This 177-nucleotide RNA was probed chemically with 2A3 and DMS. In probing experiments dimethyl sulfate is read out at A N1 and C N3, which are open when not base-paired. The reactions ran in a buffer of 150 mM KOAc, 10 mM MgCl2 and 150 mM bicine (pH 8.5), at 24 C. The data come from the RNA Mapping Database (RMDB), library M2PK90.
RNA sequence: GGGAACGACUCGAGUAGAGUCGAAAAAUUAACCCAGCCUAAAUGAAGAGCAGGACAAAAGGUUCGUCUGCAAACACUGCAUGGUAGACAGAGGAUGGGGAAAUGGAUGUGGACUAUUUGGAAGUAACUCGCUUUACUAUUUCGAUAGUAAAGCGAGAAAAGAAACAACAACAACAAC
Reactivity to 2A3 in 0.01 (KOAc 150mM, MgCl2 10mM, bicine 150mM(pH8.5), 24C), signal-to-noise 1, nucleotides 027 to 126: a010u100u050a120a040c020c000c000a000g000c000c000u130a190a180a030u170g090a090a080g030a000g110c000a050g000g050a040c040a060a180a010a000g050g000u110u080c020g010u080c090u030g000c000a000a080a000c040a000c090u060g000c060a030u060g010g000u040a010g010a020c000a030g030a010g050g040a030u070g020g010g000g060a000a000a010u070g050g010a040u080g040u070g020g000a050c010u100a120u220u090u080g080g020a030a000g010u040a040a020
Reactivity to DMS in 0.01 (KOAc 150mM, MgCl2 10mM, bicine 150mM(pH8.5), 24C), signal-to-noise 3, nucleotides 027 to 126: a080u000u010a080a200c010c010c010a160g010c060c040u000a050a090a110u000g010a070a030g010a130g010c060a070g010g010a060c090a080a050a100a070g010g010u000u000c060g010u000c000u020g010c020a090a050a080c100a130c070u000g000c040a050u000g010g030u010a060g000a090c050a040g020a100g000g000a060u000g020g000g000g010a040a050a050u000g010g010a070u010g040u000g020g010a060c080u000a090u010u000u010g020g010a080a100g010u020a080a130